[RMDB]
RNA sequence: GGGAACGACUCGAGUAGAGUCGAAAAGAUAUGGAACGUAACAGACAUGAUCGAGGGUCGGAAACGACCCGAGAUCAACAGCUGUUGACGUUCCUAAGUCAAACCGGGAACCUUCGGGUUCCCGGAACAAUAAGAGGGUGUUCGCACCCUCUUAUUGAAAAGAAACAACAACAACAAC
Reactivity to 2A3 in 0.01 (KOAc 150mM, MgCl2 10mM, bicine 150mM(pH8.5), 24C), signal-to-noise 3, nucleotides 027 to 126: g010a010u020a020u120g010g000a010a000c000g010u020a000a000c000a010g100a030c100a300u300g010a010u010c010g000a040g030g000g000u000c000g030g000a030a020a010c010g000a000c000c040c000g000a000g000a000u020c020a000a000c020a010g010c000u000g000u050u030g080a010c000g010u000u000c000c000u010a020a000g020u000c030a080a040a140c020c000g020g000g020a010a000c020c020u100u180c300g150g000g000u010u000c010c000c000g000g000a000a010
Reactivity to DMS in 0.01 (KOAc 150mM, MgCl2 10mM, bicine 150mM(pH8.5), 24C), signal-to-noise 5, nucleotides 027 to 126: g010a020u000a200u010g000g010a010a010c000g000u000a030a010c000a000g020a030c100a200u010g020a010u000c010g000a300g000g000g030u000c000g010g000a030a040a130c000g010a020c000c010c010g010a140g000a010u000c000a050a050c230a120g010c000u010g000u000u000g000a020c010g010u000u000c000c000u000a000a070g000u000c020a100a120a170c000c000g000g000g010a020a010c000c000u000u010c230g040g010g010u000u000c010c000c000g000g000a020a030
The record gives the reactivity of an RNA of 177 nucleotides to 2A3 and DMS. For DMS, 7,117 sequencing reads were counted. The RNA was probed in 150 mM KOAc, 10 mM MgCl2 and 150 mM bicine (pH 8.5) at 24 C. For 2A3, 7,843 sequencing reads were counted.